About this RNA
The record gives the reactivity of an RNA of 177 nucleotides to 2A3 and DMS. The data come from the RNA Mapping Database (RMDB), library OK2TRN. For DMS the reverse transcriptase was MarathonRT. The RNA was probed in 150 mM KOAc, 10 mM MgCl2 and 150 mM bicine (pH 8.5) at 24 C. For 2A3 the reverse transcriptase was SuperScript II with manganese.
[RMDB]
RNA sequence: GGGAACGACUCGAGUAGAGUCGAAAAGUGAGAUGUCUGGGGCUAAAAAAGGACCUUGACCUUGUGCAACAGACCAGGAAACUCGGCCUGUCAGGGACAAGUGGCCUGAAGUGACCUGGCCAGCCAGGUAUCGACUUUCAUUCGUGAAAGUCGAUACAAAAGAAACAACAACAACAAC
Reactivity to 2A3 in 0.01 (KOAc 150mM, MgCl2 10mM, bicine 150mM(pH8.5), 24C), signal-to-noise 2, nucleotides 027 to 126: g120u060g010a130g010a110u110g010u010c030u070g030g030g000g050c040u110a080a120a000a000a050a150g050g020a070c010c020u020u050g010a020c010c000u060u050g050u090g070c030a060a050c010a040g030a040c010c000a000g030g000a010a030a000c020u020c040g010g000c010c000u030g040u040c080a160g190g020g070a020c030a070a100g110u060g120g010c000c060u060g040a050a010g020u020g020a030c000c010u010g020g000c010c010a020g040c010c000a020g070
Reactivity to DMS in 0.01 (KOAc 150mM, MgCl2 10mM, bicine 150mM(pH8.5), 24C), signal-to-noise 4, nucleotides 027 to 126: g000u000g020a100g020a090u000g000u010c020u000g010g000g000g010c040u010a000a040a100a090a070a130g010g010a090c060c030u010u000g010a090c020c010u010u000g020u000g010c110a120a070c100a080g010a030c020c020a070g010g000a080a160a040c020u000c090g010g010c000c010u010g010u010c030a140g010g010g010a060c040a050a100g020u000g030g010c000c000u000g020a080a080g010u000g000a260c010c010u010g010g010c010c030a070g000c030c040a080g000